[RMDB]
An RNA of 177 nucleotides, treated with DMS and 2A3 and read out base by base.
The RNA was probed in 150 mM KOAc, 10 mM MgCl2 and 150 mM bicine (pH 8.5) at 24 C.
DMS adducts were read by reverse transcription with MarathonRT.
The DMS profile rests on 696 reads.
RNA sequence: GGGAACGACUCGAGUAGAGUCGAAAAAGGUGUCUCAAUAAAAUAGUGUGACAAAUGAGUAAAAACAUGAUUGGAAGGAUCAUGUCUUCCAACCUAGAGGGAGCUUAAAGAUAAAGGAAGAGAUGUGCGGCACGAUUAAGUUCGCUUAAUCGUGCCGAAAAGAAACAACAACAACAAC
Reactivity to DMS in 0.01 (KOAc 150mM, MgCl2 10mM, bicine 150mM(pH8.5), 24C), signal-to-noise 1, nucleotides 027 to 126: a160g000g020u000g010u020c030u000c020a010a090u010a090a060a060a130u000a040g000u000g010u030g010a060c060a040a040a070u030g030a160g010u000a050a060a070a090a050c020a010u000g000a030u010u010g050g000a130a090g000g000a040u000c140a020u000g000u010c010u000u000c040c030a100a080c060c080u010a100g030a090g010g000g000a020g000c100u000u010a050a110a080g000a030u000a050a050a100g000g000a060a100g000a020g000a030u000g010u000g010
Reactivity to 2A3 in 0.01 (KOAc 150mM, MgCl2 10mM, bicine 150mM(pH8.5), 24C), signal-to-noise 1, nucleotides 027 to 126: a030g150g000u020g020u000c000u020c040a020a100u200a160a120a010a020u170a000g120u050g030u030g070a000c000a010a150a080u150g020a060g140u200a100a010a000a000a000c000a010u090g000a020u040u020g120g050a060a060g070g020a000u050c030a060u100g030u000c020u050u010c000c000a140a160c000c000u030a010g020a070g080g010g010a000g000c000u040u140a070a050a030g030a080u050a090a110a000g030g000a020a010g030a000g020a040u060g090u110g090